[RMDB]
Source information: Chemical mapping of a 177-nucleotide RNA with 2A3 and DMS. The RNA was probed in 150 mM KOAc, 10 mM MgCl2 and 150 mM bicine (pH 8.5) at 24 C. Source: RMDB library OK2TRN, as collected in RNAgym. For DMS the reverse transcriptase was MarathonRT. 2A3 adducts were read by reverse transcription with SuperScript II with manganese.
RNA sequence: GGGAACGACUCGAGUAGAGUCGAAAAGUCGGUACGAUCGCGCGGCCGCGCAUCAUACUCGUGAUCAGGUACGGUACUGCGCACGUGAUCGCGCCGCGUAGUACCACGAUCGUGCUCUCUGAUGGCCCCGGUUCGUGAUCUUCGGAUCACGAACCGGAAAAGAAACAACAACAACAAC
Reactivity to 2A3 in 0.01 (KOAc 150mM, MgCl2 10mM, bicine 150mM(pH8.5), 24C), signal-to-noise 1, nucleotides 027 to 126: g050u040c030g000g010u020a020c020g020a040u070c020g000c000g030c030g030g010c100c060g000c050g040c030a000u000c000a020u070a150c080u030c120g040u030g020a070u080c020a030g050g030u140a100c100g090g010u060a020c020u020g000c010g000c070a010c000g070u050g030a120u090c060g000c000g040c020c000g000c000g000u000a020g050u010a050c020c030a000c000g000a000u000c010g020u020g000c010u000c010u000c010u030g060a070u080g150g040c000c000
Reactivity to DMS in 0.01 (KOAc 150mM, MgCl2 10mM, bicine 150mM(pH8.5), 24C), signal-to-noise 1, nucleotides 027 to 126: g030u000c080g000g000u010a000c030g020a010u000c080g030c030g010c070g010g030c110c070g060c040g000c240a000u000c080a080u000a140c230u010c100g030u000g000a030u000c020a040g000g020u010a070c050g030g040u030a050c050u020g020c060g020c000a030c010g000u000g010a040u000c080g000c000g000c070c020g030c040g010u000a050g000u000a020c060c080a140c040g000a010u000c010g000u020g010c020u010c070u000c010u000g000a120u000g010g000c080c050